This 177-nucleotide RNA was probed chemically with DMS and 2A3. The DMS profile rests on 2,572 reads. For 2A3 the reverse transcriptase was SuperScript II with manganese. It was measured as part of the RMDB library M2PK50.
RNA sequence: GGGAACGACUCGAGUAGAGUCGAAAAUCUUAUAUGUUCGCAUAUAAGAAAAGGCGGAGUAGUGUUGGGUCGCGAAAGGCCAUAAAUUAACUAUCACUCAGAUACAGACCUGGUUCGCCAGGUCUAACAUGUAUAAACGCUUCGGCGUUUAUACAUGAAAAGAAACAACAACAACAAC
Reactivity to DMS in 0.01 (KOAc 150mM, MgCl2 10mM, bicine 150mM(pH8.5), 24C), signal-to-noise 3, nucleotides 027 to 126: u000c000u000u010a030u000a000u000g020u010u020c220g020c020a000u000a010u000a020a000g010a040a070a110a130g010g010c020g000g010a060g020u010a100g000u000g020u000u010g010g000g000u010c030g020c050g010a090a150a120g010g000c010c010a060u010a030a050a090u000u010a060a140c090u000a080u000c090a060c070u000c080a100g010a110u010a080c210a060g000a000c000c000u000g000g010u000u010c210g020c000c000a010g010g000u000c000u000a010a090
Reactivity to 2A3 in 0.01 (KOAc 150mM, MgCl2 10mM, bicine 150mM(pH8.5), 24C), signal-to-noise 1, nucleotides 027 to 126: u010c010u040u010a000u010a000u000g000u040u050c060g020c160a010u010a000u000a000a010g000a020a060a000a040g070g010c040g000g050a020g010u050a010g000u000g080u210u120g160g050g020u060c030g010c010g080a080a050a030g030g000c000c000a030u160a020a060a000u150u100a030a000c010u020a020u180c040a020c130u120c030a020g010a090u060a190c060a010g000a000c010c030u000g020g000u070u020c080g050c030c000a010g030g000u000c000u000a000a000